RNA sequence: GGGAACGACUCGAGUAGAGUCGAAAACGCACUUCGGUGCGAACAAAUCCUAAGUCAUGUAACAAGGAAGCUUGGAUUUAUGUAGUCCUCGGAAACGAGGACGCAGAUAUUGUCAGCUUCCCGCCCAUGAUAUGGAGUAUACGCCCUUCGGGGCGAAAUUAUCAAAAGCCUUCGGGCUUUUGAUAAUAAAAGAAACAACAACAACAAC
Reactivity to 2A3 in 0.01 (KOAc 150mM, MgCl2 10mM, bicine 150mM(pH8.5), 24C), signal-to-noise 2, nucleotides 027 to 156: c010g000c000a010c000u070u100c280g150g000u010g000c010g000a060a000c030a010a190a030u030c000c000u040a070a020g000u010c000a000u010g040u090a080a060c070a280a040g000g000a010a030g000c090u270u300g050g000a020u030u130u090a030u090g010u010a260g010u100c000c010u000c010g000g050a100a090a040c020g000a030g000g030a000c000g000c000a000g010a000u160a050u040u290g300u300c010a000g010c020u060u000c010c000c000g040c000c030c000a000u010g000a000u020a030u060g000g000a000g040u100a080u030a190c060g000c010c000c000u000u070c230g000g000g000g000c020g000a000a020
Reactivity to DMS in 0.01 (KOAc 150mM, MgCl2 10mM, bicine 150mM(pH8.5), 24C), signal-to-noise 1, nucleotides 027 to 156: c000g000c020a000c010u000u000c300g120g050u020g000c020g010a080a100c070a070a160a060u000c020c000u000a140a300g000u000c020a020u030g000u000a030a040c090a150a030g000g000a020a080g010c020u000u000g030g000a090u000u000u000a110u030g030u000a120g010u000c010c000u000c000g010g040a170a090a260c010g010a010g020g020a010c000g010c020a010g000a120u000a040u000u000g010u010c170a070g000c010u000u000c000c020c020g000c300c120c030a010u000g000a100u010a300u000g010g000a040g000u000a220u000a040c020g030c010c000c000u010u020c300g050g000g040g000c000g000a000a090
Chemical mapping of a 207-nucleotide RNA with 2A3 and DMS. In probing experiments dimethyl sulfate is read out at A N1 and C N3, which are open when not base-paired. For DMS the reverse transcriptase was MarathonRT. Values cover nucleotides 27 to 156. The 2A3 profile rests on 611 reads.